[RMDB]
Chemical mapping of a 177-nucleotide RNA with DMS and 2A3. The RNA was probed in 150 mM KOAc, 10 mM MgCl2 and 150 mM bicine (pH 8.5) at 24 C. It was measured as part of the RMDB library OK1LIB. High DMS reactivity at an A or C suggests that its Watson-Crick edge is free.
RNA sequence: GGGAACGACUCGAGUAGAGUCGAAAAGGAAAACCAAUAAAUUACGGCUGGUUCUAACUGGAACUGAGGACAGCGGAAUUGUCUACGAUCAGGCUGGUAAACACGACUAAGUGGAACAGAUAAUCCAACUGUGGAGGUCGUUCGCGACUUCCACAGUAAAAGAAACAACAACAACAAC
Reactivity to DMS in 0.01 (KOAc 150mM, MgCl2 10mM, bicine 150mM(pH8.5), 24C), signal-to-noise 6, nucleotides 027 to 126: g010g000a040a060a090a250c050c040a060a070u060a080a080a000u020u010a050c090g000g000c040u000g000g000u000u010c040u000a060a080c100u010g000g010a040a090c200u010g000a050g010g000a080c060a050g010c110g010g000a070a070u020u000g010u010c050u010a120c090g010a060u010c070a030g000g000c000u000g000g000u020a090a080a080c060a040c060g000a110c110u000a030a080g000u020g000g000a020a050c080a050g000a080u020a030a060u010c040c050a060
Reactivity to 2A3 in 0.01 (KOAc 150mM, MgCl2 10mM, bicine 150mM(pH8.5), 24C), signal-to-noise 3, nucleotides 027 to 126: g090g020a000a040a000a000c000c010a000a030u130a010a050a010u080u060a040c020g020g000c010u020g050g000u020u000c000u030a040a040c020u010g010g010a010a020c010u010g010a020g030g030a010c010a000g000c000g020g010a020a040u060u050g030u020c010u040a020c050g020a010u020c010a000g030g020c000u000g030g000u050a050a040a000c010a010c010g050a020c040u040a060a030g000u010g000g000a030a000c010a020g030a010u070a020a020u020c010c010a010